[RMDB]
RNA sequence: GGGAACGACUCGAGUAGAGUCGAAAAUAAAACCGCGAAGAGAACCAACCCUUGAGACACAAGGAGGGAUGUCUCAAGGCUUGGUUCUCGACUAGUGUCGAGUCGUUCCCAAUCCCUCCGCAAAAAAGUAUCUAAUUAGCUUCGGCUAAUUAGAUACAAAAGAAACAACAACAACAAC
Reactivity to 2A3 in 0.01 (KOAc 150mM, MgCl2 10mM, bicine 150mM(pH8.5), 24C), signal-to-noise 1, nucleotides 027 to 126: u070a010a110a010a040c060c070g070c130g120a130a120g120a020g000a120a000c000c000a000a000c000c000c000u000u000g000a000g010a000c010a000c010a060a020g010g000a000g010g000g000a000u010g000u000c000u000c010a020a010g000g020c010u000u020g000g000u000u000c000u000c000g000a000c000u040a040g130u020g120u090c010g000a000g010u000c000g000u020u000c000c000c000a010a010u000c000c000c000u000c000c010g000c020a080a110a000a000a010a010
Reactivity to DMS in 0.01 (KOAc 150mM, MgCl2 10mM, bicine 150mM(pH8.5), 24C), signal-to-noise 1, nucleotides 027 to 126: u000a070a020a090a140c130c070g020c150g050a110a130g020a270g000a050a000c000c000a000a050c300c010c000u000u000g000a050g000a010c020a070c220a050a060g000g000a000g030g000g020a020u010g000u000c000u000c000a000a000g020g040c190u000u000g000g010u000u000c030u010c000g000a040c020u000a000g020u020g000u000c020g050a020g000u000c000g010u000u000c000c000c000a010a000u000c000c000c000u000c010c000g030c170a000a060a070a050a060a080